[RMDB]
RNA sequence: GGGAACGACUCGAGUAGAGUCGAAAAUAGCAGUUCCCAGGACCCCCUUCUAAAAUGACCGAGAGGGGGUGCUAGGAACACGGGGGCCCAGUGGAGCCAUGGGAUGCUCCUCCCGAUUCCGUCCAACGUCAAUAUAUGACUUCGGUCAUAUAUUGACAAAAGAAACAACAACAACAAC
Reactivity to DMS in 0.01 (KOAc 150mM, MgCl2 10mM, bicine 150mM(pH8.5), 24C), signal-to-noise 1, nucleotides 027 to 126: u000a080g060c070a150g030u000u000c000c000c040a040g030g000a030c000c000c000c000c010u050u010c050u000a050a070a160a060u010g000a100c300c250g000a040g010a030g010g000g000g010g020u000g010c010u000a040g000g010a010a000c020a080c040g020g000g000g000g000c010c030c030a120g020u000g010g020a030g010c000c110a070u000g000g000g000a190u010g000c030u000c060c010u000c010c000c000g010a240u000u010c020c050g000u000c030c080a100a150c240
Reactivity to 2A3 in 0.01 (KOAc 150mM, MgCl2 10mM, bicine 150mM(pH8.5), 24C), signal-to-noise 1, nucleotides 027 to 126: u060a000g000c020a010g000u000u010c000c000c000a000g000g100a000c000c010c000c000c010u070u030c030u150a070a090a130a160u070g050a030c030c060g020a020g010a010g120g010g000g030g000u030g000c000u000a020g000g000a000a020c060a040c090g000g000g040g050g020c030c040c000a020g030u050g030g040a010g020c010c100a200u120g100g020g000a020u140g010c010u010c040c000u000c000c000c000g020a030u100u010c030c030g050u060c040c050a030a020c110